The record gives the reactivity of an RNA of 177 nucleotides to 2A3 and DMS.
DMS adducts were read by reverse transcription with MarathonRT.
For DMS, 1,598 sequencing reads were counted.
For 2A3 the reverse transcriptase was SuperScript II with manganese.
The reactions ran in a buffer of 150 mM KOAc, 10 mM MgCl2 and 150 mM bicine (pH 8.5), at 24 C.
RNA sequence: GGGAACGACUCGAGUAGAGUCGAAAAUAAUCGUAUAGCGCCGAUUAAUUACGUACGUAAUCGUAAUCGUAGCUACGUAUAGCUAAUGCAUCGGCGCUACGUAGCAUAUUACGGCGCGCCGCGGCGCAGGUACCCUGACAUUCGUGUCAGGGUACCUAAAAGAAACAACAACAACAAC
Reactivity to 2A3 in 0.01 (KOAc 150mM, MgCl2 10mM, bicine 150mM(pH8.5), 24C), signal-to-noise 1, nucleotides 027 to 126: u070a010a060u240c030g050u080a070u010a130g010c000g000c010c000g020a010u000u140a010a010u020u010a030c000g000u000a000c120g060u000a020a080u110c010g050u020a090a080u100c000g110u060a060g060c040u000a000c020g090u050a050u040a080g040c040u070a140a020u110g020c000a050u070c020g000g010c010g040c000u000a000c000g000u000a000g030c020a110u070a110u300u070a100c050g090g000c020g010c000g000c000c000g110c070g020g000c020g010c000
Reactivity to DMS in 0.01 (KOAc 150mM, MgCl2 10mM, bicine 150mM(pH8.5), 24C), signal-to-noise 2, nucleotides 027 to 126: u000a090a090u020c020g020u000a070u000a050g010c000g030c000c000g000a080u000u000a120a040u000u000a050c010g000u000a200c070g000u000a050a090u000c070g000u010a060a130u030c140g020u020a050g010c090u000a020c100g020u000a020u000a030g010c090u030a010a050u000g010c170a070u000c080g010g000c000g020c020u000a030c000g010u020a030g000c160a110u010a160u010u000a070c040g010g020c080g000c010g000c060c030g020c060g030g000c020g030c060